Chemical mapping of a 177-nucleotide RNA with 2A3 and DMS. 2A3 adducts were read by reverse transcription with SuperScript II with manganese. Source: RMDB library OK2TST, as collected in RNAgym. For 2A3, 1,113 sequencing reads were counted.
[RMDB]
RNA sequence: GGGAACGACUCGAGUAGAGUCGAAAAGUGUGAUGCGGAAGCUCUUACCAAGAAUAAUCAACAAUUAAUUCUCAAUGUUGUUGUGAAUUAUGGUGGUAAAUGGGAUAUAGUGACGGCGGCUAGAAAAUGCUACUAUAAUCUUCGGAUUAUAGUAGCAAAAAGAAACAACAACAACAAC
Reactivity to 2A3 in 0.01 (KOAc 150mM, MgCl2 10mM, bicine 150mM(pH8.5), 24C), signal-to-noise 1, nucleotides 027 to 126: g040u060g010u020g030a060u100g020c050g050g000a050a020g000c030u020c020u040u040a020c030c010a040a000g070a030a040u100a040a020u080c030a010a030c000a040a030u040u170a060a090u170u030c110u050c000a050a070u070g000u000u020g030u000u020g000u040g000a020a000u070u030a080u090g050g050u040g040g000u030a090a100a050u040g020g000g000a000u040a000u020a080g050u000g010a030c030g000g040c030g010g030c000u130a020g130a090a030a130a010
Reactivity to DMS in 0.01 (KOAc 150mM, MgCl2 10mM, bicine 150mM(pH8.5), 24C), signal-to-noise 6, nucleotides 027 to 126: g020u000g020u000g010a060u010g010c040g010g010a120a130g010c030u000c050u000u000a100c020c040a080a120g010a110a050u000a070a070u000c030a040a050c050a030a050u010u010a080a110u010u000c040u010c070a090a140u000g010u000u000g000u000u000g010u000g000a100a080u010u000a030u000g010g020u000g000g010u000a020a040a070u010g000g010g010a070u000a080u000a070g010u000g010a040c080g020g020c070g000g010c050u000a070g000a060a040a070a090